The data come from the RNA Mapping Database (RMDB), library OK1LIB. The record gives the reactivity of an RNA of 177 nucleotides to 2A3 and DMS.
RNA sequence: GGGAACGACUCGAGUAGAGUCGAAAAGAGGCAGAGGCUGUAUCCGGUCUGCAAACACGACAGGGCUGGAAUGUCACCUGGAGUGGACGGACUACUGGCUGUCUCCGGAGUAGGACGUCCGAAGAGAGGCAUGCAGCUCGUUCGCGAGUUGCAUGCCAAAAGAAACAACAACAACAAC
Reactivity to 2A3 in 0.01 (KOAc 150mM, MgCl2 10mM, bicine 150mM(pH8.5), 24C), signal-to-noise 2, nucleotides 027 to 126: g020a010g000g000c000a000g000a040g040g000c050u010g020u040a110u030c000c020g060g000u000c010u050g040c000a000a120a040c020a030c080g120a010c030a050g000g000g060c020u110g040g080a090a150u120g010u010c050a050c120c030u040g050g000a050g070u100g000g000a000c000g000g000a010c070u060a000c030u020g150g040c000u020g030u020c000u040c050c060g020g000a050g010u030a060g010g030a030c020g020u000c000c000g010a120a000g070a030g050a080
Reactivity to DMS in 0.01 (KOAc 150mM, MgCl2 10mM, bicine 150mM(pH8.5), 24C), signal-to-noise 1, nucleotides 027 to 126: g000a040g030g000c020a030g000a150g030g040c030u010g000u020a080u070c080c020g010g000u000c000u080g060c130a050a120a090c210a060c130g000a120c030a020g000g000g000c030u030g000g000a110a070u000g000u000c010a040c020c030u000g000g000a100g040u030g000g000a020c000g000g000a030c010u000a030c000u000g000g000c070u000g030u010c030u030c030c050g000g000a080g040u000a010g000g000a070c020g000u020c060c000g000a120a050g000a090g000a170

Notes: The RNA was probed in 150 mM KOAc, 10 mM MgCl2 and 150 mM bicine (pH 8.5) at 24 C. Reactivities are rounded to 0.1 and cut off at 0 and 3. For 2A3 the reverse transcriptase was SuperScript II with manganese. For DMS, 2,060 sequencing reads were counted. For DMS the reverse transcriptase was MarathonRT.